[RMDB]
RNA sequence: GGGAACGACUCGAGUAGAGUCGAAAAAAAAAAAGAUAUGGAAGAGCGCAAGGCGCCAGGUCGCUACAUCGGAAACGAUGUAAAAGUCCUGGACCCGCUGAUGACCGCUCUUCCUAAGUCAAAAAAAGAUAUAAUCGAAGUUCGCUUCGAUUAUAUCAAAAGAAACAACAACAACAAC
Reactivity to DMS in 0.01 (KOAc 150mM, MgCl2 10mM, bicine 150mM(pH8.5), 24C), signal-to-noise 1, nucleotides 027 to 126: a000a000a080a080a110a210a050g000a050u000a300u000g010g000a020a000g000a000g020c000g020c060a060a080g000g010c010g000c020c010a000g020g000u000c020g010c300u000a000c010a000u000c000g010g010a160a060a120c000g000a000u000g030u000a000a080a140a260g000u000c000c000u040g010g000a110c170c300c180g000c010u010g000a170u000g000a110c300c000g000c000u000c000u000u000c000c000u000a000a040g010u000c000a000a000a060a060a060a090a110

An RNA of 177 nucleotides, treated with DMS and read out base by base. Source: RMDB library TTRDES, as collected in RNAgym. Reactivities are given for positions 27 through 126. The RNA was probed in 150 mM KOAc, 10 mM MgCl2 and 150 mM bicine (pH 8.5) at 24 C.